[RMDB]
RNA sequence: GGGAACGACUCGAGUAGAGUCGAAAAGCGUACUACAAGAGGGAAAGUGGAGCAUCGAUCGUACACAAGAUGAGGUUAUCCCAAAUAGGAUAACUUGAGUGUACGGGAGCUCCAUAACACUCUUGUAUCGCAAAAGCUCCUUGUUCGCAAGGAGCAAGUAGCGAUACCCGUUCGCGGGUAUCGCUACAAAAGAAACAACAACAACAAC
Reactivity to 2A3 in 0.01 (KOAc 150mM, MgCl2 10mM, bicine 150mM(pH8.5), 24C), signal-to-noise 2, nucleotides 027 to 156: g040c000g010u110a060c020u000a000c080a000a000g000a000g100g060g090a170a070a000g020u000g000g000a000g000c020a200u230c020g200a160u050c020g030u000a000c050a000c040a000a080g120a240u300g180a100g090g060u010u000a020u000c000c000c000a130a300a100u300a080g040g000a010u020a010a000c000u030u020g020a020g020u000g000u010a000c000g000g010g000a000g040c020u000c000c000a000u000a000a000c010a000c010u000c000u010u000g000u010a000u070c000g010c030a000a140a010a000g000c000u000c000c010u000u000g000u020u060c300g000c130a020a000g000g000a000g010c000a000a000